[RMDB]
RNA sequence: GGGAACGACUCGAGUAGAGUCGAAAAGAUAUGGAAACCCAUGACAUGCUUGCUCGGAAACGAGGAGCAACAGCAUGUGGUUUCCUAAGUCAAAACAAAUGGAAGAACUUCGGUUCUUCCAUUUGAAGACAUAGCCAAUGUUCGCAUUGGCUAUGUCAAAAGAAACAACAACAACAAC
Reactivity to DMS in 0.01 (KOAc 150mM, MgCl2 10mM, bicine 150mM(pH8.5), 24C), signal-to-noise 3, nucleotides 027 to 126: g000a010u010a300u000g020g000a000a000a010c000c000c000a010u010g010a100c070a250u000g000c000u000u000g000c000u000c000g000g000a040a060a160c020g010a020g000g010a010g000c000a020a040c270a110g000c010a010u000g000u000g020g020u000u000u000c000c000u000a010a090g000u000c020a110a090a120a160c010a010a000a000u000g000g000a000a010g000a020a010c000u010u010c230g040g000u000u000c000u000u000c000c000a010u000u000u000g000a090a100
Reactivity to 2A3 in 0.01 (KOAc 150mM, MgCl2 10mM, bicine 150mM(pH8.5), 24C), signal-to-noise 1, nucleotides 027 to 126: g000a020u030a010u070g020g020a000a000a000c050c020c000a000u020g070a130c020a040u030g010c000u070u110g300c000u010c010g020g040a040a060a030c010g010a010g030g020a010g060c000a030a040c090a030g060c010a000u010g060u290g050g000u000u000u000c000c000u000a010a000g020u010c040a000a000a100a210c010a010a010a010u000g000g000a020a010g000a010a010c010u060u160c300g060g020u030u030c010u000u010c000c000a000u000u010u000g000a000a000